[RMDB]
RNA sequence: GGGAACGACUCGAGUAGAGUCGAAAAGGGUCACUCUGGUUUAUUGCCCAUUAGUUUGUAUGGUGUGGAAUGAUGACCUACUUUCAGCAGCGUCUGAAGACAUAGCAGCACAUCUAUUUGGUACUCAUGAUGGGCGUGCAGCUAUUGCGCCGAUCGAACGCGGAUCAUUAUUCGUAAUGAUCCGCGUAAAAGAAACAACAACAACAAC
Reactivity to 2A3 in 0.01 (KOAc 150mM, MgCl2 10mM, bicine 150mM(pH8.5), 24C), signal-to-noise 1, nucleotides 027 to 156: g050g030g120u050c040a000c030u000c000u040g000g020u190u240u260a180u150u240g020c010c010c010a000u000u100a080g110u110u140u300g070u040a050u030g000g010u050g000u130g010g060a150a080u110g030a050u000g080a030c000c000u030a050c030u100u130u070c020a010g000c000a030g030c000g120u120c030u040g040a000a000g000a070c000a060u100a000g040c070a010g010c000a000c000a030u030c010u010a050u090u070u040g160g010u100a100c000u160c240a010u120g000a000u000g000g030g050c000g040u000g120c000a000g060c030u030a000u100u300g030c030g020c030c000g100a050u090c050g000a040
This 207-nucleotide RNA was probed chemically with 2A3. Reactivities are given for positions 27 through 156. 2A3 adducts were read by reverse transcription with SuperScript II with manganese. Source: RMDB library OK3TST, as collected in RNAgym. The RNA was probed in 150 mM KOAc, 10 mM MgCl2 and 150 mM bicine (pH 8.5) at 24 C.